[RMDB]
RNA sequence: GGGAACGACUCGAGUAGAGUCGAAAAGCAGCACUGUGUUUGGAGCAGCAGCCUGCAGCAGGUACUGCACCUGGCCAGGACCGUGCCAGGCAAGGGCCCGGGCAGGUCUCCCUCCUCUCUGCGCUGGCAGGGACCUUUCUUCCACCAUCUCCUCCACUCGGCUUAAGCCGUUCGCGGCUUAAGCCGAAAAAGAAACAACAACAACAAC
Reactivity to 2A3 in 0.01 (KOAc 150mM, MgCl2 10mM, bicine 150mM(pH8.5), 24C), signal-to-noise 1, nucleotides 027 to 156: g030c010a000g000c020a030c050u060g010u000g010u120u150u070g070g000a040g000c020a000g000c020a000g030c020c000u020g000c010a030g090c020a010g000g040u110a180c010u040g000c000a010c020c000u000g010g000c030c010a060g000g090a050c040c050g050u070g020c010c020a020g040g000c020a030a090g010g030g000c010c040c030g000g020g000c020a020g000g020u000c030u020c000c010c000u030c020c000u020c000u020c040u050g000c070g030c030u030g020g010c020a040g000g000g040a040c010c030u100u120u020c000u050u010c040c000a010c160c000a000u300c030u000c060c080u300c210c300a000c000

Chemical mapping of a 207-nucleotide RNA with 2A3.
The data come from the RNA Mapping Database (RMDB), library OK3TST.